Chemical mapping of a 177-nucleotide RNA with DMS. It was measured as part of the RMDB library TTRINS. Reactivities are rounded to 0.1 and cut off at 0 and 3. Conditions: 150 mM KOAc, 10 mM MgCl2 and 150 mM bicine (pH 8.5), 24 C.
RNA sequence: GGGAACGACUCGAGUAGAGUCGAAAAGAUAUGGAAGUAGGCAAACCUCCCACUGUGGACAUGUCUGUAUCUCGGAAACGAGAUAUAAAGACAACAGCCAUUGGGAGGUUUGCCUACUUCCUAAGUCCAUUACGAAAAUCUUCGGAUUUUCGUAAUGAAAAGAAACAACAACAACAAC
Reactivity to DMS in 0.01 (KOAc 150mM, MgCl2 10mM, bicine 150mM(pH8.5), 24C), signal-to-noise 4, nucleotides 027 to 126: g000a110u000a300u010g000g000a020a010g020u000a000g010g010c000a010a010a010c000c000u000c000c000c020a040c300u010g030u010g010g000a100c200a130u000g000u000c000u000g000u010a000u000c000u000c000g010g010a100a090a170c010g000a010g000a020u000a010u000a050a090a050g000a020c000a030a090c230a140g000c020c010a020u010u000g020g010g030a020g000g000u010u000u000g000c000c010u000a000c000u000u000c000c000u000a010a070g000u010c020